The record gives the reactivity of an RNA of 177 nucleotides to 2A3 and DMS. Conditions: 150 mM KOAc, 10 mM MgCl2 and 150 mM bicine (pH 8.5), 24 C.
RNA sequence: GGGAACGACUCGAGUAGAGUCGAAAAUUGAAAUUGAACCGUCCUGUUAUCGAAAGAUAGGCAGAAGAUACGAAAUGUGUGACAGCAUGGGAAGUAAAGGCAGACCGUGGUUCCCUUGAGUAUCUUAUUUCGUAUAGAGUUUCGACUCUAUACGAAAAAAAGAAACAACAACAACAAC
Reactivity to 2A3 in 0.01 (KOAc 150mM, MgCl2 10mM, bicine 150mM(pH8.5), 24C), signal-to-noise 5, nucleotides 027 to 126: u090u120g030a030a030a030u080u060g020a050a030c040c030g060u070c010c000u000g030u050u020a030u050c030g030a090a030a020g010a020u040a030g090g050c030a010g020a160a020g020a060u070a040c010g030a010a040a080u120g050u010g040u050g050a040c030a020g020c010a030u030g010g000g030a020a030g050u160a140a070a020g090g000c010a000g030a060c000c010g010u040g010g030u020u010c000c000c000u020u060g020a020g010u030a020u010c000u020u020a050
Reactivity to DMS in 0.01 (KOAc 150mM, MgCl2 10mM, bicine 150mM(pH8.5), 24C), signal-to-noise 9, nucleotides 027 to 126: u020u030g010a060a090a100u010u010g010a070a130c060c050g000u010c060c000u000g010u010u010a020u000c020g000a110a080a130g000a010u000a030g010g000c020a040g000a100a060g000a060u010a050c070g000a060a070a040u010g010u000g010u000g000a110c150a100g010c020a040u000g000g000g000a090a090g010u010a050a080a110g010g010c050a040g010a140c040c040g010u010g000g010u000u000c000c000c010u020u000g000a140g010u000a040u010c010u000u000a170